[RMDB]
RNA sequence: GGGAACGACUCGAGUAGAGUCGAAAAGCCAUCUGCUGAACACGCAUCCAUAAGCCUUGCUGAGGGAGGCAGCUUGUUUCCUCCUCAUGCUGAGGCUACUGCUACAAGGCUCUGUCAGUGAGGCUGGUUGGAAAGUUCUAGAAAUGUGGGUCAGGUACCCGUAUUUUAGUUUCGACUAAAAUACGGGAAAAGAAACAACAACAACAAC
Reactivity to 2A3 in 0.01 (KOAc 150mM, MgCl2 10mM, bicine 150mM(pH8.5), 24C), signal-to-noise 4, nucleotides 027 to 156: g090c010c000a090u060c060u120g030c010u050g050a040a010c060a000c110g060c060a050u010c010c000a030u030a070a000g010c000c000u000u020g030c000u000g000a030g010g020g030a030g070g050c030a030g030c030u040u050g040u030u090u030c010c010u000c010c020u100c020a120u270g080c250u200g040a010g000g000c000u010a000c000u020g050c000u020a030c010a100a010g090g000c000u000c010u030g300u030c010a010g000u010g020a020g000g020c000u040g040g130u030u020g020g030a050a090a040g030u070u030c090u070a060g030a090a130a070u130g000u040g030g030g060u090c050a050g080g000u130a090
Reactivity to DMS in 0.01 (KOAc 150mM, MgCl2 10mM, bicine 150mM(pH8.5), 24C), signal-to-noise 2, nucleotides 027 to 156: g020c040c010a080u000c070u000g000c020u000g010a060a090c030a070c120g020c080a150u000c020c010a080u000a150a040g000c010c010u000u010g020c010u000g000a060g010g010g000a060g050g020c090a040g010c030u000u000g000u000u000u000c020c000u000c000c060u000c100a120u000g030c100u000g010a040g020g030c040u010a020c020u000g000c020u000a040c100a010a080g010g000c000u000c010u020g010u000c010a040g020u000g000a020g000g050c000u000g010g010u000u000g030g000a070a080a090g010u000u000c030u010a110g000a070a080a070u000g010u000g010g020g010u000c030a110g020g000u000a120

This 207-nucleotide RNA was probed chemically with 2A3 and DMS. The RNA was probed in 150 mM KOAc, 10 mM MgCl2 and 150 mM bicine (pH 8.5) at 24 C. For 2A3 the reverse transcriptase was SuperScript II with manganese.